[RMDB]
RNA sequence: GGGAACGACUCGAGUAGAGUCGAAAAAAUUGGGCGUCUGCUUUUAUUCAAAUUCUGGCUCGCUUCGCGAAGAGGCAGUCCGUAAUACCGAAGGUCUUUUUCCCACAUGAUACUUUCACUAUCAGAGUCGGAGCAGGGGAAAACAGGAAAGAACAAAAAAUAUAUCGUGUUUCGACACGAUAUAUUUAAAAGAAACAACAACAACAAC
Reactivity to DMS in 0.01 (KOAc 150mM, MgCl2 10mM, bicine 150mM(pH8.5), 24C), signal-to-noise 1, nucleotides 027 to 156: a060a100u000u000g010g010g060c040g000u010c070u000g040c030u000u000u000u000a040u010u040c070a060a120a120u020u010c010u000g000g000c030u000c130g020c050u000u000c030g000c080g020a110a150g000a050g040g020c050a050g030u000c010c050g050u000a030a060u000a060c050c020g010a070a080g030g000u020c000u000u000u000u030u000c030c000c000a060c080a120u010g010a120u000a040c050u000u010u020c070a090c050u000a050u010c050a170g010a120g040u000c000g030g000a030g010c040a110g010g020g010g000a080a040a050a090c060a040g000g010a000a060a100g000a040a060c070a020a020a060
Reactivity to 2A3 in 0.01 (KOAc 150mM, MgCl2 10mM, bicine 150mM(pH8.5), 24C), signal-to-noise 2, nucleotides 027 to 156: a000a000u100u080g030g010g010c020g110u010c040u030g040c060u080u100u090u140a160u150u210c070a090a090a200u090u000c010u030g020g000c000u010c110g020c030u110u050c030g060c090g140a300a100g000a020g000g040c000a010g000u070c010c000g010u040a070a040u030a120c020c050g010a030a020g050g020u040c010u030u060u000u020u010c000c070c000a070c000a080u120g020a060u030a040c040u070u150u180c020a020c090u120a080u110c060a070g010a010g090u020c000g030g000a010g010c010a020g010g000g000g020a010a090a000a080c080a030g060g040a140a080a020g040a100a040c110a070a120a010
Structure probing data (DMS and 2A3) for a 207-nucleotide construct. As a SHAPE reagent, 2A3 marks flexible, mostly unpaired nucleotides at the ribose 2'-OH. For DMS, 2,199 sequencing reads were counted. 2A3 adducts were read by reverse transcription with SuperScript II with manganese. DMS adducts were read by reverse transcription with MarathonRT.